[RMDB]
RNA sequence: GGGAACGACUCGAGUAGAGUCGAAAAUGUCGGCAAGCUCUAUAUAUGGACACUUACGAAGGGUUUUGGUUGUUUUGUAUCUCAAGCCGACUUUGAGUAUUUGAGGAAAAUACGACAGAAAUAACAAAUAGACCGGUAUCCUUCGGGAUACCGGUAACUGAUUCUCUUGAUUCGUCAAGAGAAUCAGAAAAGAAACAACAACAACAAC
Reactivity to DMS in 0.01 (KOAc 150mM, MgCl2 10mM, bicine 150mM(pH8.5), 24C), signal-to-noise 1, nucleotides 027 to 156: u010g020u000c030g030g030c020a100a090g020c050u020c010u000a100u000a150u000a070u010g000g010a100c040a050c080u010u010a090c120g020a150a110g020g040g000u000u000u020u030g030g020u000u010g020u020u000u060u000g010u000a090u010c020u000c020a050a300g020c060c020g000a010c040u000u010u000g020a290g050u010a050u000u000u040g000a170g000g010a190a030a040a040u000a000c030g000a160c060a110g000a120a060a050u000a050a070c020a030a080a110u000a110g010a040c000c000g050g030u000a050u000c000c000u000u000c270g000g010g010a040u000a020c010c000g000g000u000a010a020
Reactivity to 2A3 in 0.01 (KOAc 150mM, MgCl2 10mM, bicine 150mM(pH8.5), 24C), signal-to-noise 1, nucleotides 027 to 156: u080g000u030c000g000g000c040a050a020g000c050u060c000u030a100u000a100u050a120u300g110g030a080c030a010c150u210u300a130c110g090a110a000g030g040g030u050u100u080u080g090g000u050u010g010u000u030u110u060g060u040a080u080c010u010c000a100a050g000c000c000g010a010c000u030u070u040g000a000g000u000a040u040u000u040g020a060g090g130a000a080a000a000u010a020c030g090a010c050a010g130a000a130a020u050a040a030c030a060a050a040u080a070g130a020c000c000g020g000u000a010u020c000c000u070u110c110g010g000g000a000u000a000c060c000g000g020u000a000a000